[RMDB]
RNA sequence: GGGAACGACUCGAGUAGAGUCGAAAAUUUAAAAUCAUGCCGUGAACAUGUCCUGUCAUCUUCAAAAUUUCACCAUGACCAUGUUGAGCAUCUGUUUUAAUCAACUCAAUUUCUCCAAUGUGUGUCAAACUAUAACCAGGUUCGCCUGGUUAUAGUUAAAAGAAACAACAACAACAAC
Reactivity to DMS in 0.01 (KOAc 150mM, MgCl2 10mM, bicine 150mM(pH8.5), 24C), signal-to-noise 5, nucleotides 027 to 126: u010u010u010a040a050a090a090u010c170a040u010g030c040c090g030u000g000a050a130c080a050u000g000u010c020c030u000g010u010c060a050u000c080u010u000c110a060a060a070a110u000u010u000c040a060c050c130a090u000g010a030c040c040a030u000g010u000u000g010a060g010c300a050u000c060u000g010u000u000u000u000a050a090u010c140a020a050c030u010c040a030a080u010u000u000c030u000c040c090a080a060u000g010u000g010u020g010u010c060a080
Reactivity to 2A3 in 0.01 (KOAc 150mM, MgCl2 10mM, bicine 150mM(pH8.5), 24C), signal-to-noise 2, nucleotides 027 to 126: u050u020u020a060a050a030a070u060c000a020u010g010c020c030g070u060g020a020a030c020a030u030g050u050c030c000u050g040u100c020a070u000c060u190u060c030a080a120a110a240u050u060u040c020a040c030c030a060u080g010a010c030c000a020u050g010u030u010g040a030g000c020a020u040c030u010g110u000u070u000u120a050a080u090c010a000a100c040u000c070a040a050u040u030u060c050u050c030c020a050a060u090g020u000g010u040g060u070c070a040

The data come from the RNA Mapping Database (RMDB), library OK2TRN. Structure probing data (DMS and 2A3) for a 177-nucleotide construct. For 2A3, 2,202 sequencing reads were counted.